The record gives the reactivity of an RNA of 177 nucleotides to 2A3 and DMS. The DMS profile rests on 1,220 reads.
RNA sequence: GGGAACGACUCGAGUAGAGUCGAAAAGAGCAGGGGCUGGCAAACCGCGUCACGCCGGACAGCCUGCCGCCGGUGGAGUGGCUGACGUAUGGCAGCGGUUACCUGGCGGGAAUGAAGCUGGGCGGGAGAGCAUGAGUGAGUUCGCUCACUCAUGCUCAAAAGAAACAACAACAACAAC
Reactivity to 2A3 in 0.01 (KOAc 150mM, MgCl2 10mM, bicine 150mM(pH8.5), 24C), signal-to-noise 1, nucleotides 027 to 126: g000a000g000c030a010g040g000g020g000c040u090g060g000c050a060a050a010c010c020g000c000g070u070c050a050c090g060c010c010g000g070a030c000a000g070c000c030u020g020c020c010g030c020c080g060g050u170g010g090a170g080u170g110g000c000u010g010a040c020g090u160a120u260g020g070c020a030g000c030g000g040u000u020a050c030c030u020g040g000c000g000g020g030a030a110u150g020a070a000g050c040u070g000g000g090c100g050g030g030a130
Reactivity to DMS in 0.01 (KOAc 150mM, MgCl2 10mM, bicine 150mM(pH8.5), 24C), signal-to-noise 1, nucleotides 027 to 126: g000a090g010c080a020g010g010g010g020c050u010g010g020c120a050a080a170c050c050g020c030g000u000c080a080c080g000c040c010g040g000a100c050a040g010c020c000u010g000c000c030g010c070c030g010g020u010g020g000a100g020u010g020g000c010u000g010a070c010g010u000a090u000g000g000c000a060g010c010g000g010u000u000a040c030c010u000g030g020c080g000g010g010a040a140u000g030a080a120g010c060u000g020g000g010c040g020g020g000a090